[RMDB]
RNA sequence: GGGAACGACUCGAGUAGAGUCGAAAAGAGAAGCGGGAAGGCGGUAGGCGCACUACACACAUACAAGCAUGACAGUCACUUUUCCCCCCAACAUUUCCCUCGCCGCCUCCUGCCUGGACGUUGGGGACAUGCAAAAUGGGUUCGCCCAUUUUGCAUGAAAAGAAACAACAACAACAAC
Reactivity to DMS in 0.01 (KOAc 150mM, MgCl2 10mM, bicine 150mM(pH8.5), 24C), signal-to-noise 3, nucleotides 027 to 126: g010a110g000a130a250g010c010g010g000g010a070a030g010g020c010g000g020u020a100g030g020c060g000c050a070c020u000a050c140a060c090a080c070a080u010a060c110a070a110g010c040a040u000g000a080c080a050g010u000c060a060c080u000u000u000u010c020c070c000c010c000c000a010a010c050a110u010u010u000c010c000c010u010c100g020c020c000g000c010c000u000c020c000u000g000c020c010u000g030g010a100c180g000u010u010g020g010g000g010a210
Reactivity to 2A3 in 0.01 (KOAc 150mM, MgCl2 10mM, bicine 150mM(pH8.5), 24C), signal-to-noise 1, nucleotides 027 to 126: g020a010g020a120a050g020c020g000g000g030a090a070g000g000c050g010g010u020a080g010g080c020g000c090a010c040u080a030c030a010c020a010c000a000u110a140c030a060a060g060c000a010u100g090a050c050a030g060u120c050a060c150u140u110u060u160c010c010c000c010c000c000a040a000c010a030u050u010u030c000c000c000u030c030g000c000c010g010c000c000u000c020c010u000g030c000c000u020g020g020a000c010g020u000u020g000g000g010g010a020